RNA sequence: GGGAACGACUCGAGUAGAGUCGAAAAACCUUAUUUUGAGAAGCUGAGGGAUUUGGCCCAUAGAAGCUUCAGCAACCGACUUUAAACAGCACGGUGCUAAUACCAACGAGCAACUCGAAUGAUAAGUAAAACGUUGACAAGUUCGCUUGUCAACGAAGAACAAAAUAGACUUCGGUCUAUUUUGUUCAAAAGAAACAACAACAACAAC
Reactivity to 2A3 in 0.01 (KOAc 150mM, MgCl2 10mM, bicine 150mM(pH8.5), 24C), signal-to-noise 2, nucleotides 027 to 156: a000c060c000u140u090a230u040u100u080u070g080a030g000a000a020g010c000u000g010a000g030g000g020a070u040u030u070g010g000c000c000c000a030u120a100g020a010a000g000c000u000u020c030a000g000c000a000a020c010c000g030a030c010u040u010u240a170a190a120c040a040g000c000a010c010g040g010u000g000c010u010a030a030u010a090c020c000a040a060c040g060a030g080c080a060a100c030u020c100g070a090a090u060g050a110u040a150a000g030u100a060a140a040a030c010g000u000u000g000a000c000a010a000g000u010u130c120g010c130u000u000g000u000c000a000a000c000g000a000a020